[RMDB]
RNA sequence: GGGAACGACUCGAGUAGAGUCGAAAAGAUAUGGAUCCGAUCCCACUACCCACCCUAAUGGAUCGGAAACGAUCCGAUAGGAGGUGGGAGUCGGAUCCUAAGUCAAAAGGCAGGCUUCGGCCUGCCACUCAGAGACAAAGUUCGCUUUGUCUCUGAGAAAAGAAACAACAACAACAAC
Reactivity to 2A3 in 0.01 (KOAc 150mM, MgCl2 10mM, bicine 150mM(pH8.5), 24C), signal-to-noise 1, nucleotides 027 to 126: g050a040u110a070u220g000g000a000u000c000c000g020a040u000c010c030c000a030c010u180a190c070c090c040a060c020c020c000u070a100a070u170g020g000a000u000c000g010g000a040a000a000c000g000a000u000c000c000g070a100u030a010g000g040a040g040g000u010g020g000g000a020g130u020c010g010g000a000u000c000c000u000a050a020g050u020c030a000a040a100a130g000g000c000a010g020g000c000u070u250c300g140g000c030c010u000g000c010c000a000
Reactivity to DMS in 0.01 (KOAc 150mM, MgCl2 10mM, bicine 150mM(pH8.5), 24C), signal-to-noise 3, nucleotides 027 to 126: g010a080u000a300u020g000g000a010u000c000c000g000a140u000c000c010c020a080c000u020a100c060c140c180a300c100c000c000u020a020a110u000g000g020a000u020c000g010g000a050a030a160c020g010a010u000c000c010g020a060u000a030g000g000a140g010g000u000g010g010g000a020g010u000c000g000g000a020u010c000c000u000a000a080g000u000c050a060a060a140a110g020g020c000a010g030g020c010u000u000c200g060g040c010c000u000g000c000c000a020
Structure probing data (2A3 and DMS) for a 177-nucleotide construct. It was measured as part of the RMDB library TTRDES.